[RMDB]
RNA sequence: GGGAACGACUCGAGUAGAGUCGAAAAGAUAUGGACGUCGAUAGGGAGUCGUGUGGUCGGAAACGACCACCGACGAAGAACUAUUCGACGUCCUAAGUCAAAGGCUGUCUGCUUCGGCAGACAGCCAGAUAUUACAUCCGUUCGCGGAUGUAAUAUCAAAAGAAACAACAACAACAAC
Reactivity to 2A3 in 0.01 (KOAc 150mM, MgCl2 10mM, bicine 150mM(pH8.5), 24C), signal-to-noise 2, nucleotides 027 to 126: g030a010u050a030u130g000g000a010c000g010u010c010g000a000u000a010g070g060g060a210g020u010c030g030u190g010u010g300g020u000c000g010g020a060a050a060c010g010a010c000c010a010c000c000g010a000c020g010a070a040g050a020a020c010u010a020u210u250c020g010a000c000g000u000c000c000u000a000a000g010u000c020a000a040a110g000g020c010u000g000u010c010u000g020c030u110u170c300g160g000c010a000g010a010c000a000g000c000c000a000
Reactivity to DMS in 0.01 (KOAc 150mM, MgCl2 10mM, bicine 150mM(pH8.5), 24C), signal-to-noise 4, nucleotides 027 to 126: g000a050u000a300u000g000g000a010c000g020u000c000g010a030u000a030g010g000g010a100g020u000c000g020u010g030u000g010g010u000c000g000g000a070a110a180c010g010a010c000c000a010c020c010g010a010c000g020a080a120g010a120a210c010u010a020u010u010c000g010a010c000g010u000c000c000u000a000a060g010u000c040a110a170a110g000g010c000u010g000u010c010u000g000c000u000u010c250g020g010c000a010g000a000c000a010g010c000c000a000
Chemical mapping of a 177-nucleotide RNA with 2A3 and DMS. The RNA was probed in 150 mM KOAc, 10 mM MgCl2 and 150 mM bicine (pH 8.5) at 24 C. For 2A3, 11,116 sequencing reads were counted. For DMS, 5,557 sequencing reads were counted. For DMS the reverse transcriptase was MarathonRT. It was measured as part of the RMDB library TTRDES. Values cover nucleotides 27 to 126.